Chemical mapping of a 177-nucleotide RNA with 2A3 and DMS. Conditions: 150 mM KOAc, 10 mM MgCl2 and 150 mM bicine (pH 8.5), 24 C.
RNA sequence: GGGAACGACUCGAGUAGAGUCGAAAAAGCCGGUAUACGUACCGGCAAUGCUCUGAUGACACAGGUAGCAAAUAGGAAGUGCCGUCAGAGCGAGAACUGACGAUCCUGGAGACGCGUGUCUGAGCAAGAAUGUUUUGUAAUUCGUUACAAAACAUUCAAAAGAAACAACAACAACAAC
Reactivity to 2A3 in 0.01 (KOAc 150mM, MgCl2 10mM, bicine 150mM(pH8.5), 24C), signal-to-noise 9, nucleotides 027 to 126: a000g000c000c000g000g000u020a040u020a060c250g040u010a020c010c000g000g000c000a000a010u040g000c000u000c000u010g030a030u030g020a010c000a000c020a050g140g160u210a080g140c130a110a130a110u160a090g100g070a140a090g040u020g040c020c010g000u000c000a000g000a010g010c020g000a020g000a030a050c060u060g030a010c020g020a020u020c000c000u030g050g010a030g010a020c040g010c020g060u050g030u020c040u050g030a030g040c020a060a060
Reactivity to DMS in 0.01 (KOAc 150mM, MgCl2 10mM, bicine 150mM(pH8.5), 24C), signal-to-noise 9, nucleotides 027 to 126: a090g020c000c000g010g020u000a030u010a070c180g030u000a020c010c000g010g000c000a010a000u020g000c000u000c000u000g000a030u000g010a040c000a010c010a090g010g020u020a100g010c160a090a090a110u040a100g000g010a180a180g000u000g000c060c000g000u000c000a000g000a020g000c020g010a060g010a120a100c090u010g000a100c120g000a100u000c020c010u000g000g000a100g010a060c090g000c070g010u010g010u010c020u000g000a070g000c110a100a110